[RMDB]
RNA sequence: GGGAACGACUCGAGUAGAGUCGAAAAGAUAUGGAGAAUCUUAAUGGCGUUGAAACAACAUCGGAAACGAUGUUGUGGAGCCAUUAAGAGUUCUCCUAAGUCAAAUCAUGUGCUUCGGCACAUGAAACGUUACACUGCUGUUCGCAGCAGUGUAACGAAAAGAAACAACAACAACAAC
Reactivity to DMS in 0.01 (KOAc 150mM, MgCl2 10mM, bicine 150mM(pH8.5), 24C), signal-to-noise 1, nucleotides 027 to 126: g010a050u010a300u000g000g000a030g000a020a080u000c000u000u000a000a000u000g040g010c020g000u000u030g000a250a100a010c000a010a010c000a000u000c000g010g000a100a100a200c010g060a010u000g000u010u000g000u000g000g010a050g000c000c010a000u010u000a000a000g000a050g010u000u020c000u000c010c000u000a000a060g010u000c020a110a120a140u000c000a000u010g020u000g010c000u010u000c200g040g020c020a000c000a030u000g000a020a070a150
Reactivity to 2A3 in 0.01 (KOAc 150mM, MgCl2 10mM, bicine 150mM(pH8.5), 24C), signal-to-noise 1, nucleotides 027 to 126: g000a010u100a060u170g040g000a000g020a040a050u000c000u010u010a020a010u010g000g020c040g300u300u020g100a000a010a010c000a040a000c000a030u000c000g000g040a070a040a030c040g000a000u010g000u050u000g000u000g080g020a010g030c020c000a000u010u000a000a000g000a000g010u030u110c010u000c000c000u000a070a010g000u000c040a050a060a140u090c000a010u010g010u000g000c000u180u090c300g140g030c010a020c000a000u020g030a000a000a000